[RMDB]
RNA sequence: GGGAACGACUCGAGUAGAGUCGAAAAGAUAUGGAACGGUUGUGGGAGGCGCGUGGUCGGAAACGACCACGUGCCAUCGAUCACACUGCCGUUCCUAAGUCAAAAGUUGAUUCUUCGGAAUCAACAAGCUUAAUAUUUACUUCGGUAAAUAUUAAGCAAAAGAAACAACAACAACAAC
Reactivity to 2A3 in 0.01 (KOAc 150mM, MgCl2 10mM, bicine 150mM(pH8.5), 24C), signal-to-noise 2, nucleotides 027 to 126: g000a000u010a000u060g000g000a000a000c010g000g010u040u020g000u010g010g060g130a300g040g000c010g000c010g020u010g010g020u020c000g000g000a000a010a000c000g000a000c000c000a000c000g000u000g010c000c000a010u030c020g010a050u050c010a000c000a000c010u010g000c010c010g000u000u000c000c000u000a000a000g000u000c000a000a020a050a200g010u000u000g010a020u020u010c010u040u100c300g160g010a000a010u010c010a000a010c010a010a010
Reactivity to DMS in 0.01 (KOAc 150mM, MgCl2 10mM, bicine 150mM(pH8.5), 24C), signal-to-noise 5, nucleotides 027 to 126: g000a020u000a020u020g000g010a010a010c000g000g020u000u000g010u000g000g000g020a170g030g020c000g020c000g040u000g010g020u000c000g020g010a010a000a030c010g010a020c000c000a000c000g020u000g020c000c000a010u010c100g000a300u010c110a020c010a020c020u000g010c000c000g010u000u000c000c000u000a000a070g000u000c000a130a090a120a130g000u000u000g000a020u000u000c010u000u020c190g030g000a020a010u000c000a000a000c000a100a130

This 177-nucleotide RNA was probed chemically with 2A3 and DMS.
The 2A3 profile rests on 20,268 reads.
It was measured as part of the RMDB library TTRDES.